[RMDB]
The data come from the RNA Mapping Database (RMDB), library M2RFOK. An RNA of 207 nucleotides, treated with DMS and 2A3 and read out base by base. Conditions: 150 mM KOAc, 10 mM MgCl2 and 150 mM bicine (pH 8.5), 24 C.
RNA sequence: GGGAACGACUCGAGUAGAGUCGAAAAUCAGAAUCAGGCCGGAGUGUUUAGCGCUCCGUAAACACGGUCGUACAUCCAGCCGGUAGCCUGGUUCCUGGCAUUGAGUGAUGUACGGAGUUUAUAGAGCAAAAGAAAGACCUGUUCGCAGGUCUUUCAACAAAGGACAAUGCUUCGGCAUUGUCCUUUGAAAAGAAACAACAACAACAAC
Reactivity to DMS in 0.01 (KOAc 150mM, MgCl2 10mM, bicine 150mM(pH8.5), 24C), signal-to-noise 1, nucleotides 027 to 156: u000c030a030g000a070a040u000c010a000g110g010c000c030g000g000a170g040u000g000u000u000u010a140g050c090g010c000u010c000c050g020u000a010a020a060c040a140c050g050g040u010c010g010u010a070c080a070u000c000c010a200g000c000c030g010g020u010a110g020c030c010u000g020g010u010u010c030c010u000g010g040c040a290u000u000g030a230g010u010g000a000u010g020u000a050c000g000g000a100g000u000u010u000a090u000a060g080a040g000c050a090a110a140a110g020a010a010a030g000a000c010c000u000g020u000u010c300g010c020a000g050g010u000c000u010u000u000c000a040a170
Reactivity to 2A3 in 0.01 (KOAc 150mM, MgCl2 10mM, bicine 150mM(pH8.5), 24C), signal-to-noise 1, nucleotides 027 to 156: u100c010a000g040a000a000u030c000a020g040g020c010c020g050g000a080g040u060g060u140u140u240a120g090c050g010c010u000c000c000g010u040a000a040a000c080a010c090g080g080u050c010g000u000a000c000a000u000c030c040a050g010c000c000g000g000u010a000g030c000c030u040g020g000u040u020c010c000u040g000g000c020a040u090u180g020a050g040u220g000a000u000g000u000a000c030g050g010a030g000u130u200u010a250u060a030g100a020g070c090a150a050a040a050g000a000a000a000g000a020c000c000u020g020u050u100c300g000c100a000g000g010u000c010u000u000u000c000a000a000